Notes
An RNA of 177 nucleotides, treated with DMS and 2A3 and read out base by base. For 2A3, 830 sequencing reads were counted. The reactions ran in a buffer of 150 mM KOAc, 10 mM MgCl2 and 150 mM bicine (pH 8.5), at 24 C. It was measured as part of the RMDB library OK1LIB. 2A3 adducts were read by reverse transcription with SuperScript II with manganese. DMS adducts were read by reverse transcription with MarathonRT.
[RMDB]
RNA sequence: GGGAACGACUCGAGUAGAGUCGAAAACUCAGCCGCCACCUGUUCCUUGAGCAUCCCGUCAGGCGUGCACACAACAGGGCGACUGGAGUGCGUGAACGGGCGUAGAAGGUGUCUGUGUGUGUGUAUAGAUUAGGCUCAUGUUCGCAUGAGCCUAAUCAAAAGAAACAACAACAACAAC
Reactivity to DMS in 0.01 (KOAc 150mM, MgCl2 10mM, bicine 150mM(pH8.5), 24C), signal-to-noise 2, nucleotides 027 to 126: c070u010c030a160g010c050c020g000c080c000a100c060c050u000g010u010u000c060c040u020u060g000a070g050c070a100u020c300c010c000g000u010c100a100g020g000c180g000u020g020c000a010c000a020c230a030a060c040a040g000g000g050c040g040a040c000u000g000g000a100g000u000g030c000g000u020g010a080a080c150g000g000g010c020g000u000a070g000a280a080g000g000u000g010u040c090u000g050u000g010u030g010u000g000u000g040u040a020u030a190
Reactivity to 2A3 in 0.01 (KOAc 150mM, MgCl2 10mM, bicine 150mM(pH8.5), 24C), signal-to-noise 1, nucleotides 027 to 126: c020u030c040a020g000c010c010g020c070c060a080c010c020u030g040u080u060c000c010u020u070g030a010g010c050a050u000c020c040c010g080u020c060a010g000g080c010g030u040g000c030a020c010a000c000a140a000c060a050g030g040g040c100g090a080c020u010g080g000a110g000u060g070c080g010u040g010a140a040c120g010g070g120c020g000u070a010g050a250a040g040g000u000g000u000c020u000g060u020g020u000g000u010g000u020g000u080a040u100a120